[RMDB]
RNA sequence: GGGAACGACUCGAGUAGAGUCGAAAACAGGAAACUGGUUAAUCGUUUUCCUUGAUAGUAUAGCGGAAACCAUAAAUAAGAAGAACUCUAAGUGCUUGAGUAGAGUUAAAAUAAUUAGACAGGCAAUUAAGGUACUCCACGUUCGCGUGGAGUACAAUCAAUAGCCUAACUUCGGUUAGGCUAUUGAAAAAGAAACAACAACAACAAC
Reactivity to DMS in 0.01 (KOAc 150mM, MgCl2 10mM, bicine 150mM(pH8.5), 24C), signal-to-noise 1, nucleotides 027 to 156: c060a120g040g040a130a090a080c110u000g050g010u010u000a140a110u000c040g000u000u010u000u000c020c010u000u000g010a190u010a130g010u000a060u000a110g040c000g050g000a060a050a090c030c000a150u010a070a160a190u010a070a110g010a080a150g000a090a040c000u000c010u000a030a070g000u000g010c100u000u000g010a140g000u000a010g020a030g000u000u000a010a010a060a050u000a000a060u000u010a040g000a240c030a040g010g010c000a090a120u000u000a070a080g010g010u000a020c000u000c010c000a020c010g000u000u000c280g040c040g080u000g000g000a010g010u000a010c000a040a090
Reactivity to 2A3 in 0.01 (KOAc 150mM, MgCl2 10mM, bicine 150mM(pH8.5), 24C), signal-to-noise 3, nucleotides 027 to 156: c030a010g070g100a080a050a050c080u110g030g050u140u130a140a080u090c020g000u010u020u060u050c010c010u020u070g030a030u070a120g060u130a040u110a110g020c010g010g040a060a030a030c020c010a030u090a150a140a010u160a100a050g130a050a000g020a060a000c000u000c000u010a000a020g030u070g260c010u010u020g010a000g010u020a000g010a000g010u110u160a010a010a000a000u120a010a010u260u020a000g000a010c000a000g000g030c020a030a020u140u140a160a040g090g000u000a000c000u000c000c010a000c010g020u050u050c190g000c000g050u010g000g000a000g000u000a000c000a000a000